Annotation:
Chemical mapping of a 207-nucleotide RNA with 2A3 and DMS. Reactivities are given for positions 27 through 156. For 2A3 the reverse transcriptase was SuperScript II with manganese. For DMS the reverse transcriptase was MarathonRT. For 2A3, 14,908 sequencing reads were counted. The RNA was probed in 150 mM KOAc, 10 mM MgCl2 and 150 mM bicine (pH 8.5) at 24 C.
RNA sequence: GGGAACGACUCGAGUAGAGUCGAAAAAGCAUGUUCGCAUGCUACGGGUCCUAAGUCAACCUAUCGUUUGUUGUCAGCGAUGUGUCGGAAACGACAUGCAUCGCUUGGAUUUACAAACGCCGAGGGUUGAUAUGGAGAUGUGGGGAUUCGUCCCCAAUUUAUGUGAUAGAUUCGUCUAUCACAUAAAAAAAGAAACAACAACAACAAC
Reactivity to 2A3 in 0.01 (KOAc 150mM, MgCl2 10mM, bicine 150mM(pH8.5), 24C), signal-to-noise 8, nucleotides 027 to 156: a010g010c020a020u050g010u150u240c300g020c140a000u000g010c000u030a050c050g140g010g060u020c000c010u040a160a040g020u000c000a000a000c000c010u060a060u120c010g000u000u000u010g010u010u010g020u020c000a000g000c010g000a000u000g040u010g000u010c000g010g040a070a070a110c010g010a010c020a030u260g020c000a000u010c000g000c000u010u060g000g000a000u070u190u300a010c000a000a000a010c010g030c050c080g240a300g000g020g000u000u000g000a000u010a060u090g070g020a150g030a090u220g080u150g110g010g000g000a020u040u070c120g070u050c030c000c000c010a000a000
Reactivity to DMS in 0.01 (KOAc 150mM, MgCl2 10mM, bicine 150mM(pH8.5), 24C), signal-to-noise 6, nucleotides 027 to 156: a040g010c020a010u000g010u000u010c270g020c020a030u000g020c000u000a060c070g010g010g010u000c010c000u000a100a260g010u000c010a010a020c000c000u000a170u010c010g020u000u000u000g000u000u000g000u000c000a060g010c000g020a020u000g030u000g000u000c000g010g000a180a130a300c010g020a020c010a060u010g040c020a010u000c000g020c020u000u000g020g010a040u000u000u010a020c000a010a010a020c010g010c130c130g010a160g010g010g020u000u010g010a020u000a120u010g010g000a120g010a140u000g010u000g000g010g020g010a090u000u000c100g000u000c000c000c000c000a000a010